[RMDB]
RNA sequence: GGGAACGACUCGAGUAGAGUCGAAAAUCGUCGAACAGGGGUCUUACUCUUGAUGGAUUGCUAUUUAAUUUUAUUACCGACCUGUUCGCAGCGGGUAAGGAUUAAAUAUGGCUAAAUUUAUUAAGAGCAAUUAUUAUUACUUCGGUAAUAAUAAUUGAAAAGAAACAACAACAACAAC
Reactivity to 2A3 in 0.01 (KOAc 150mM, MgCl2 10mM, bicine 150mM(pH8.5), 24C), signal-to-noise 3, nucleotides 027 to 126: u080c010g060u010c020g030a040a030c030a110g000g010g020g050u000c040u050u100a030c000u010c000u000u000g000a000u000g000g010a000u000u030g000c010u000a000u000u010u000a000a010u000u020u020u060a160u040u020a030c010c000g080a090c020c010u010g010u030u030c130g000c010a000g040c030g070g000g000u000a020a010g020g010a000u000u000a000a000a000u070a040u080g040g000c030u100a090a010a020u010u030u010a020u000u010a010a000g000a000g000
Reactivity to DMS in 0.01 (KOAc 150mM, MgCl2 10mM, bicine 150mM(pH8.5), 24C), signal-to-noise 2, nucleotides 027 to 126: u020c040g020u010c040g000a050a080c100a050g000g000g020g020u020c070u010u010a300c000u000c010u000u000g000a030u000g020g000a020u000u000g010c010u000a020u010u000u000a000a000u010u010u010u030a060u020u000a040c020c000g010a240c140c020u010g010u010u020c070g010c030a050g000c120g020g010g020u000a010a020g000g010a030u000u000a010a000a020u000a060u040g000g000c030u030a050a040a020u000u000u020a010u010u000a020a010g000a020g010
Notes:
Structure probing data (2A3 and DMS) for a 177-nucleotide construct. For 2A3 the reverse transcriptase was SuperScript II with manganese. For 2A3, 3,851 sequencing reads were counted. The reactions ran in a buffer of 150 mM KOAc, 10 mM MgCl2 and 150 mM bicine (pH 8.5), at 24 C. High DMS reactivity at an A or C suggests that its Watson-Crick edge is free. For DMS, 4,168 sequencing reads were counted.